Conditions: 150 mM KOAc, 10 mM MgCl2 and 150 mM bicine (pH 8.5), 24 C. Chemical mapping of a 177-nucleotide RNA with 2A3. For 2A3 the reverse transcriptase was SuperScript II with manganese. Values are in units of 0.01, from 0 to 300, in steps of 10.

[RMDB]
RNA sequence: GGGAACGACUCGAGUAGAGUCGAAAAUGGAUCAUACGGCAUAGGCACGCCAUCCAGAGAGUGCUGCGUUGCGCCCAUCUCGCGGUGGCCAUAUCCGUGUUCGAUGGCGAUGACGCCUGGCAUCACGACCGGCACUCACGUUCGCGUGAGUGCCGGUAAAAGAAACAACAACAACAAC
Reactivity to 2A3 in 0.01 (KOAc 150mM, MgCl2 10mM, bicine 150mM(pH8.5), 24C), signal-to-noise 1, nucleotides 027 to 126: u020g010g000a000u040c000a090u080a110c110g000g010c020a020u050a080g130g000c010a000c040g000c000c000a000u020c000c020a030g060a000g000a000g050u000g000c020u020g000c000g110u130u070g100c080g020c080c120c000a100u000c020u000c030g000c000g000g000u000g040g140c240c000a080u220a120u180c000c010g000u100g020u000u150c170g000a000u060g030g020c000g020a050u090g000a000c000g070c040c040u000g000g020c020a060u120c080a000c090g060